Chemical mapping of a 177-nucleotide RNA with 2A3 and DMS. The data come from the RNA Mapping Database (RMDB), library TTRDES.
RNA sequence: GGGAACGACUCGAGUAGAGUCGAAAAAAAAAAGAUAUGGAAGCUGUUCUGAUCGAAGAACUCACGUAACAUCACCUCGGAAACGAGGUGUGGUGAGGGAGAUCUACAGCUUCCUAAGUCAAAAAAACACACUAUAUAGCUUCGGCUAUAUAGUGUGAAAAGAAACAACAACAACAAC
Reactivity to 2A3 in 0.01 (KOAc 150mM, MgCl2 10mM, bicine 150mM(pH8.5), 24C), signal-to-noise 1, nucleotides 027 to 126: a000a000a010a000a000a020g000a010u050a020u060g010g000a000a000g000c020u000g030u260u230c220u240g080a020u040c040g140a300a030g000a010a010c000u010c000a000c010g030u040a030a020c010a220u240c000a000c000c000u020c000g000g000a020a020a000c000g040a030g030g000u000g000u010g010g000u000g000a010g000g000g070a020g010a010u000c000u000a000c000a000g000c000u000u000c000c000u000a010a000g000u000c020a000a000a130a030a000a070a130
Reactivity to DMS in 0.01 (KOAc 150mM, MgCl2 10mM, bicine 150mM(pH8.5), 24C), signal-to-noise 2, nucleotides 027 to 126: a000a030a080a070a100a120g000a010u000a050u000g000g000a010a000g020c000u000g010u000u020c300u020g000a020u000c000g000a090a070g040a110a200c000u000c000a000c000g010u000a020a040c170a010u000c010a000c010c000u020c000g020g010a010a000a010c000g000a010g010g020u000g010u000g000g010u000g000a020g000g000g000a010g000a010u010c020u010a010c000a000g020c020u000u000c000c000u000a000a050g000u000c000a000a000a060a070a100a120a160
Conditions: 150 mM KOAc, 10 mM MgCl2 and 150 mM bicine (pH 8.5), 24 C. For 2A3 the reverse transcriptase was SuperScript II with manganese. The DMS profile rests on 2,689 reads.